[RMDB]
An RNA of 207 nucleotides, treated with DMS and 2A3 and read out base by base. For 2A3 the reverse transcriptase was SuperScript II with manganese. It was measured as part of the RMDB library OK3TST. Conditions: 150 mM KOAc, 10 mM MgCl2 and 150 mM bicine (pH 8.5), 24 C. For DMS the reverse transcriptase was MarathonRT. Values cover nucleotides 27 to 156.
RNA sequence: GGGAACGACUCGAGUAGAGUCGAAAACGACGCCCGCUUUCGCGUCGGCAUGAUGGGCCGGCGGUCGGGUAAGAACGAGGUAUCAACGGCGGCCGAGGUAGACUACUCCACGCAACCCGACAAAUACGAUUUUGGGACAGACGACGCCUCGAAGGGCGUUAUCGGCUCAUUUCGAUGAGCCGAUAACAAAAGAAACAACAACAACAAC
Reactivity to DMS in 0.01 (KOAc 150mM, MgCl2 10mM, bicine 150mM(pH8.5), 24C), signal-to-noise 1, nucleotides 027 to 156: c030g050a050c090g010c000c050c010g040c040u000u000u000c020g050c000g070u010c010g010g000c040a060u060g020a230u000g000g000g000c000c040g040g040c020g000g000u000c010g050g000g000u000a090a060g000a150a160c050g020a100g000g030u000a130u010c040a180a100c080g010g020c020g000g050c020c040g050a010g030g000u000a090g010a120c040u000a050c050u010c020c020a220c010g030c060a100a110c030c020c000g000a050c000a050a050a080u000a070c080g020a160u000u000u000u040g050g020g000a190c020a120g000a160c070g000a080c010g000c000c000u000c010g000a170a010g030g020g000c040
Reactivity to 2A3 in 0.01 (KOAc 150mM, MgCl2 10mM, bicine 150mM(pH8.5), 24C), signal-to-noise 3, nucleotides 027 to 156: c080g110a020c040g010c000c010c010g010c080u120u160u080c110g000c010g020u000c000g000g000c030a050u180g240a190u120g050g140g000c000c000g000g000c020g000g030u020c020g000g020g020u080a100a050g050a050a020c030g010a010g070g060u080a040u130c070a070a000c050g100g010c020g030g030c070c010g000a030g000g050u100a040g050a030c030u050a040c010u060c000c020a050c000g010c030a060a050c020c000c000g000a000c050a010a140a030u210a030c060g060a080u000u050u040u140g010g000g040a060c040a040g020a010c050g000a010c060g010c000c000u000c010g040a030a110g000g040g000c040